[RMDB]
RNA sequence: GGGAACGACUCGAGUAGAGUCGAAAAGUUCGGGCCGACCUCGAACAUGCAACGGCUCGCCGAGCAUCUGCGCAGUAUCCGCGGUGACCUCGAGCAAGUCAUUUGGCUCAACCCGGAAACCGGCGAAAAGAUCGGUGUCGCCGACGGUGAGCUGGUCCAGUUCUAUAGUGUUCGCACUAUAGAACUGAAAAGAAACAACAACAACAAC
Reactivity to DMS in 0.01 (KOAc 150mM, MgCl2 10mM, bicine 150mM(pH8.5), 24C), signal-to-noise 2, nucleotides 027 to 156: g020u000u010c010g020g020g050c090c180g050a120c200c020u000c030g000a010a030c030a170u010g000c060a110a090c040g010g020c000u010c010g010c000c020g010a160g010c030a110u000c020u010g020c030g030c060a170g000u000a110u020c070c020g020c040g000g010u010g010a150c130c010u000c080g000a110g050c040a140a110g040u000c060a180u000u000u020g010g000c020u000c050a140a090c020c020c020g010g000a030a160a050c070c020g020g010c000g000a110a100a050a120g000a110u000c040g030g030u000g020u010c070g030c030c020g010a110c020g000g020u000g010a080g030c000u000g010g020u000c010
Structure probing data (DMS) for a 207-nucleotide construct.
In probing experiments dimethyl sulfate is read out at A N1 and C N3, which are open when not base-paired.
For DMS the reverse transcriptase was MarathonRT.
It was measured as part of the RMDB library OK3TST.
Conditions: 150 mM KOAc, 10 mM MgCl2 and 150 mM bicine (pH 8.5), 24 C.